An RNA of 177 nucleotides, treated with 2A3 and DMS and read out base by base. The data come from the RNA Mapping Database (RMDB), library M2PK50. 2A3 adducts were read by reverse transcription with SuperScript II with manganese. DMS adducts were read by reverse transcription with MarathonRT. For DMS, 780 sequencing reads were counted. For 2A3, 1,296 sequencing reads were counted.
RNA sequence: GGGAACGACUCGAGUAGAGUCGAAAAGCUUGUAGCUUCGGCUACAAGCAUCUAAAAUCUGCGGUAAAUAAUUACGAGGCGUUACCGCUGAACGCCUCGAUACAACCACAUCAUUCGUGAUGUGGAAUCCAUGAGCAGAUUUCGAUCUGCUCAUGGAAAAAGAAACAACAACAACAAC
Reactivity to 2A3 in 0.01 (KOAc 150mM, MgCl2 10mM, bicine 150mM(pH8.5), 24C), signal-to-noise 1, nucleotides 027 to 126: g000c000u010u000g000u000a010g000c040u040u040c300g080g000c010u010a000c000a010a020g000c000a020u000c000u050a040a040a060a080u080c080u090g070c040g000g060u090a030a080a110u090a080a210u290u130a120c040g000a000g010g000c000g000u000u010a090c030c000g010c000u050g000a000a000c000g000c000c000u000c000g010a000u020a020c050a020a040c010c000a000c010a000u000c000a010u000u140c160g130u040g000a000u000g030u010g000g000a000a030
Reactivity to DMS in 0.01 (KOAc 150mM, MgCl2 10mM, bicine 150mM(pH8.5), 24C), signal-to-noise 1, nucleotides 027 to 126: g020c000u000u000g010u010a000g000c000u020u020c190g000g000c000u000a000c000a010a000g000c010a020u000c040u010a060a110a090a070u000c110u000g000c020g020g010u000a050a070a090u000a130a090u020u030a170c040g000a040g000g050c000g000u000u000a060c040c060g000c110u010g000a010a000c000g000c020c020u000c020g000a100u000a030c280a130a180c000c000a000c000a010u000c000a060u000u060c190g040u020g000a020u000g000u020g000g020a020a030